[RMDB]
The data come from the RNA Mapping Database (RMDB), library TTRDES. This 177-nucleotide RNA was probed chemically with DMS. The DMS profile rests on 648 reads. Conditions: 150 mM KOAc, 10 mM MgCl2 and 150 mM bicine (pH 8.5), 24 C. Reactivities are given for positions 27 through 126.
RNA sequence: GGGAACGACUCGAGUAGAGUCGAAAAGAUAUGGACACCUAAAUGGACAUGCGUCGGCUCGGAAACGAGCCCGCGCAACAGCCAUGGGUGUCCUAAGUCAAACUUUCUGCUCUUCGGAGCAGAAAGAGUUUUCUUUUUGCUUCGGCAAAAAGAAAACAAAAGAAACAACAACAACAAC
Reactivity to DMS in 0.01 (KOAc 150mM, MgCl2 10mM, bicine 150mM(pH8.5), 24C), signal-to-noise 1, nucleotides 027 to 126: g010a010u000a170u000g000g000a050c030a000c000c000u000a060a070a140u010g000g000a080c190a110u020g000c010g100u000c300g020g020c000u000c000g000g000a060a040a050c000g010a000g030c020c000c240g000c010g000c000a000a020c280a130g030c000c010a000u000g000g000g000u010g000u020c000c000u010a000a060g000u000c010a250a090a300c020u000u000u000c000u000g000c000u000c070u000u020c300g000g000a010g020c000a000g000a000a000a020g000a100